[RMDB]
RNA sequence: GGGAACGACUCGAGUAGAGUCGAAAAGCCAGCGAUAUGUGUUCACCCCGGCAUCCUUCAUGGCCAUCAGCGCACUGCCUGUACCGGUUCGCUGCCCGCUGUCGGUUAUCAGGACCUGUACGUUAUGGCUGUUCUAUGAAUUCGUUCAUAGAACAGCAAAAGAAACAACAACAACAAC
Reactivity to 2A3 in 0.01 (KOAc 150mM, MgCl2 10mM, bicine 150mM(pH8.5), 24C), signal-to-noise 3, nucleotides 027 to 126: g010c010c020a010g000c050g060a080u040a060u190g160u020g060u070u080c030a090c010c020c000c010g040g000c000a060u000c010c000u070u120c050a130u120g050g020c050c010a080u060c030a020g030c000g000c050a030c050u030g010c010c030u080g030u020a050c010c030g010g000u020u030c030g000c050u070g040c000c020c000g060c050u050g060u140c040g000g040u070u070a090u090c040a020g020g040a050c010c020u030g040u070a010c040g030u050u090a120u160g110
Reactivity to DMS in 0.01 (KOAc 150mM, MgCl2 10mM, bicine 150mM(pH8.5), 24C), signal-to-noise 4, nucleotides 027 to 126: g010c030c020a060g020c060g000a090u000a070u000g020u000g010u000u000c070a150c070c030c020c050g000g000c040a050u010c040c020u000u000c090a090u010g000g010c030c030a080u000c050a060g000c060g000c040a050c030u000g020c010c030u000g000u000a040c080c050g010g000u000u000c240g020c040u010g010c080c040c060g010c080u010g020u000c040g010g010u000u000a070u000c070a110g010g000a050c060c030u010g010u000a030c070g020u000u010a080u010g020